Chemical mapping of a 177-nucleotide RNA with DMS and 2A3. For DMS the reverse transcriptase was MarathonRT. Values cover nucleotides 27 to 126. The reactions ran in a buffer of 150 mM KOAc, 10 mM MgCl2 and 150 mM bicine (pH 8.5), at 24 C. Source: RMDB library TTRINS, as collected in RNAgym.
[RMDB]
RNA sequence: GGGAACGACUCGAGUAGAGUCGAAAAGAUAUGGACAGCGACGACGUACUAAGGAUCCUGGAGAUGACCGGUCGGAAACGACCGACCAUCUAUGAAGGGAUCCUUAGUACAUCAGCUGUCCUAAGUCCUAAUGUAAGUAGUUCGCUACUUACAUUAGAAAAGAAACAACAACAACAAC
Reactivity to DMS in 0.01 (KOAc 150mM, MgCl2 10mM, bicine 150mM(pH8.5), 24C), signal-to-noise 8, nucleotides 027 to 126: g000a110u000a290u010g010g000a020c000a000g010c000g010a160c290g000a020c040g030u000a000c000u000a020a010g010g010a000u000c000c000u000g000g000a020g010a020u000g000a030c020c010g010g000u000c000g010g000a090a110a230c010g010a010c000c000g010a010c020c000a000u000c000u010a210u010g010a220a220g000g010g010a000u000c000c000u000u000a000g000u000a000c000a010u000c000a190g010c010u000g000u000c000c000u000a010a090g010u000c030
Reactivity to 2A3 in 0.01 (KOAc 150mM, MgCl2 10mM, bicine 150mM(pH8.5), 24C), signal-to-noise 2, nucleotides 027 to 126: g040a020u120a050u290g000g020a020c000a010g010c020g190a260c190g010a010c050g260u000a010c010u010a000a020g000g000a000u020c010c000u040g030g020a000g000a010u000g000a030c030c020g000g000u010c000g000g020a090a090a060c010g010a010c000c000g000a010c010c000a000u010c010u070a300u150g040a000a030g000g000g000a010u010c000c000u000u000a000g000u000a000c000a000u000c000a010g000c000u010g000u020c000c000u010a000a010g010u000c000